[RMDB]
RNA sequence: GGGAACGACUCGAGUAGAGUCGAAAACGGGUUUGGUGCGUUCACAUUUCGGCGCCCGCCGCAAAGCUUUCAACUGGGGCCUGGCCCAGGUGAAGGCCGACCUCGACGCCAAAGCCGCUGAUCCGGCACUAUAGCGCUAUUUCGAUAGCGCUAUAGUAAAAGAAACAACAACAACAAC
Reactivity to 2A3 in 0.01 (KOAc 150mM, MgCl2 10mM, bicine 150mM(pH8.5), 24C), signal-to-noise 4, nucleotides 027 to 126: c000g030g020g000u020u050u090g030g010u070g040c030g040u090u120c050a070c030a230u100u180u140c040g010g000c040g060c050c100c080g000c010c010g000c050a060a050a010g000c000u000u000u040c010a030a030c020u010g010g000g030g080c080c130u100g090g100c010c000c000a010g000g000u010g000a010a010g010g000c000c010g020a030c000c020u080c050g080a110c010g040c010c000a040a020a020g050c000c020g000c050u030g010a060u030c010c000g080g030c060
Reactivity to DMS in 0.01 (KOAc 150mM, MgCl2 10mM, bicine 150mM(pH8.5), 24C), signal-to-noise 7, nucleotides 027 to 126: c030g000g010g010u000u000u000g010g020u000g010c030g010u010u000c070a120c150a190u000u010u000c040g010g010c010g010c140c170c220g010c010c010g000c210a050a090a120g000c000u000u000u000c010a020a020c010u000g000g000g000g000c100c090u000g010g000c000c000c000a010g000g000u000g010a020a010g000g000c010c070g000a080c110c040u000c020g020a130c020g010c010c010a020a030a060g000c010c000g010c050u000g000a120u000c030c010g010g040c130
The record gives the reactivity of an RNA of 177 nucleotides to 2A3 and DMS. For DMS, 13,699 sequencing reads were counted. Reactivities are given for positions 27 through 126.